[RMDB]
RNA sequence: GGGAACGACUCGAGUAGAGUCGAAAAGUCAUGCCUUCGGGCAUGACAGGUACCGAGAGGUACCAAAUAGCGUACAGUAGACUCAGACUGUACGCUAAAAAAGUGUGUGUUCAAUAAGUGCCAAUUGAACACACACUAAAAUGGCGCAAGAGUGUAAAUUAAUUAAUUAGUUCGCUAAUUAAUUAAUAAAAGAAACAACAACAACAAC
Reactivity to 2A3 in 0.01 (KOAc 150mM, MgCl2 10mM, bicine 150mM(pH8.5), 24C), signal-to-noise 2, nucleotides 027 to 156: g010u000c000a000u000g000c000c010u070u080c240g030g000g010c000a000u000g000a000c000a000g010g000u000a000c000c000g030a040g010a030g070g010u010a010c010c010a080a000a000u050a000g010c000g010u000a000c010a010g000u060a050g070a170c060u020c120a010g030a040c000u000g000u000a000c000g010c000u000a010a000a000a000a000a030g000u000g000u000g000u000g000u000u000c000a000a010u110a180a020g070u050g220c040c050a000a030u000u000g000a000a000c000a000c000a000c010a000c010u000a000a000a000a000u070g080g000c090g020c150a250a000g030a070g110u100g060u120a300a300
Reactivity to DMS in 0.01 (KOAc 150mM, MgCl2 10mM, bicine 150mM(pH8.5), 24C), signal-to-noise 2, nucleotides 027 to 156: g000u010c010a020u000g010c000c010u000u040c300g030g040g090c000a020u010g000a010c000a030g000g010u000a000c000c010g010a300g000a300g000g040u010a030c030c000a060a020a110u010a020g000c030g000u000a010c000a000g040u010a040g020a090c130u000c100a300g020a040c000u010g040u020a010c000g000c010u000a000a030a040a090a030a020g000u000g020u010g010u000g000u000u010c010a010a000u000a050a120g040u010g010c070c130a200a050u010u010g010a020a020c000a000c030a010c010a000c020u000a000a040a110a070u010g020g020c000g010c070a100a040g000a090g020u000g010u000a100a040
Source: RMDB library OK3TST, as collected in RNAgym. The record gives the reactivity of an RNA of 207 nucleotides to 2A3 and DMS. The 2A3 profile rests on 961 reads. The reactions ran in a buffer of 150 mM KOAc, 10 mM MgCl2 and 150 mM bicine (pH 8.5), at 24 C. 2A3 is a SHAPE reagent: it acylates the 2'-hydroxyl of flexible nucleotides of all four kinds. For DMS, 2,725 sequencing reads were counted.